[RMDB]
RNA sequence: GGGAACGACUCGAGUAGAGUCGAAAAGAUAUGGAGAUCGUUCGAGAAUGCAGAAUCGGAAACGAUUAAGUAUAUUCGAUGAGAACAUCUCCUAAGUCAAACUUCAUGCGCUUCGGCGCAUGAAGAACCACCCUUUAACGUUCGCGUUAAAGGGUGGAAAAGAAACAACAACAACAAC
Reactivity to DMS in 0.01 (KOAc 150mM, MgCl2 10mM, bicine 150mM(pH8.5), 24C), signal-to-noise 2, nucleotides 027 to 126: g010a030u000a130u010g000g000a030g010a020u000c230g040u000u000c000g010a040g020a010a030u000g000c100a130g000a040a010u000c000g000g020a060a040a080c010g020a010u000u000a020a080g010u000a100u000a120u000u000c000g000a090u010g010a280g000a020a010c010a040u000c010u000c000c000u000a010a060g000u010c020a120a100a220c000u000u000c000a000u000g010c010g010c010u000u000c270g010g020c000g010c000a000u000g000a010a000g000a050a140
Reactivity to 2A3 in 0.01 (KOAc 150mM, MgCl2 10mM, bicine 150mM(pH8.5), 24C), signal-to-noise 4, nucleotides 027 to 126: g010a020u020a010u060g010g000a010g000a030u060c180g020u010u020c020g010a010g000a080a020u070g060c070a040g180a290a000u010c010g000g000a020a020a000c030g000a010u020u050a120a040g040u040a190u020a080u300u080c140g180a300u130g030a010g010a010a000c000a010u010c000u000c010c000u000a020a000g010u010c040a070a120a110c010u010u000c000a000u010g000c020g030c020u070u110c300g180g050c010g000c010a000u000g010a000a000g010a010a010

An RNA of 177 nucleotides, treated with DMS and 2A3 and read out base by base. Values are in units of 0.01, from 0 to 300, in steps of 10. Source: RMDB library TTRDEL, as collected in RNAgym. Conditions: 150 mM KOAc, 10 mM MgCl2 and 150 mM bicine (pH 8.5), 24 C.